[RMDB]
RNA sequence: GGGAACGACUCGAGUAGAGUCGAAAAUGCUAGGAGUGGGGAGCGACCGGAACGAGGAGAAAAGUAAAGAAAGCAACGGGGCUAGCGAGUGGAUGUUCCGCCUCCCCGGGGAGCCGAGUGAGGCUUAGCUUUAAUUAUGGUUCGCCAUAAUUAAAGCAAAAGAAACAACAACAACAAC
Reactivity to 2A3 in 0.01 (KOAc 150mM, MgCl2 10mM, bicine 150mM(pH8.5), 24C), signal-to-noise 2, nucleotides 027 to 126: u080g000c010u030a030g010g050a130g140u140g020g010g000g000a010g000c110g040a060c140c000g030g000a040a010c010g020a070g080g050a070g080a050a080a030a000g100u150a050a100a120g090a070a150a010g000c010a010a050c070g040g020g000g000c010u010a010g010c000g030a030g040u100g060g030a060u130g020u000u040c010c030g000c020c010u020c000c030c000c020g000g000g000g000a000g040c010c020g040a050g060u110g040a040g030g010c040u020u030a010
Reactivity to DMS in 0.01 (KOAc 150mM, MgCl2 10mM, bicine 150mM(pH8.5), 24C), signal-to-noise 3, nucleotides 027 to 126: u000g000c060u010a060g010g010a140g010u000g030g000g000g010a040g010c070g030a070c120c010g010g010a040a040c020g010a130g030g000a140g000a090a080a070a110g020u010a060a080a140g000a090a070a100g000c070a030a060c090g010g000g010g030c030u000a050g010c020g010a110g030u000g020g010a120u010g010u000u010c020c010g000c040c000u000c010c010c010c000g000g000g010g010a040g010c020c020g000a150g000u000g010a100g020g000c010u000u000a090